[RMDB]
RNA sequence: GGGAACGACUCGAGUAGAGUCGAAAAACUGACGGCAAUUCCCGCCAACCUGUUUAAAGCAUGUUCUGAAGCGAAUCAUUUUGGCGGUGCAUUCACUGGCUGUUCGCAGCUUCUUUCUGUUCCUGCCGGUCUGUUUGCUGGUCUGUCGAAAGUGACCGUACAUACGUCAAUUCGUUGACGUAUGUACAAAAGAAACAACAACAACAAC
Reactivity to 2A3 in 0.01 (KOAc 150mM, MgCl2 10mM, bicine 150mM(pH8.5), 24C), signal-to-noise 5, nucleotides 027 to 156: a010c070u070g030a020c020g010g030c010a030a100u120u100c000c010c010g000c000c000a010a010c020c010u050g080u100u090u160a090a100a020g010c010a100u160g080u240u200c140u210g120a100a040g020c030g050a070a020u090c030a040u030u040u050u040g020g000c000g040g010u050g040c030a030u030u060c030a010c060u100g030g020c020u050g070u170u130c130g000c030a010g020c000u180u080c000u060u290u040c050u050g020u060u060c020c000u020g000c000c010g040g030u030c060u050g040u010u060u050g030c020u060g020g080u050c060u040g060u040c030g050a050a070a050g040u050g050a010c020c020
Reactivity to DMS in 0.01 (KOAc 150mM, MgCl2 10mM, bicine 150mM(pH8.5), 24C), signal-to-noise 2, nucleotides 027 to 156: a030c050u010g030a060c030g010g000c060a060a150u000u020c080c000c010g010c030c020a050a050c070c000u000g030u010u000u000a080a110a170g020c020a130u010g000u000u000c090u030g020a110a130g010c040g010a070a070u000c030a100u000u000u000u010g040g000c000g020g040u010g000c070a060u000u010c090a050c030u010g000g000c050u030g000u000u010c110g030c070a120g010c030u010u000c060u000u000u000c070u010g020u000u000c030c000u000g020c000c020g040g000u000c030u000g000u000u010u010g040c000u010g010g000u000c070u000g010u010c010g010a100a100a120g000u010g000a090c070c110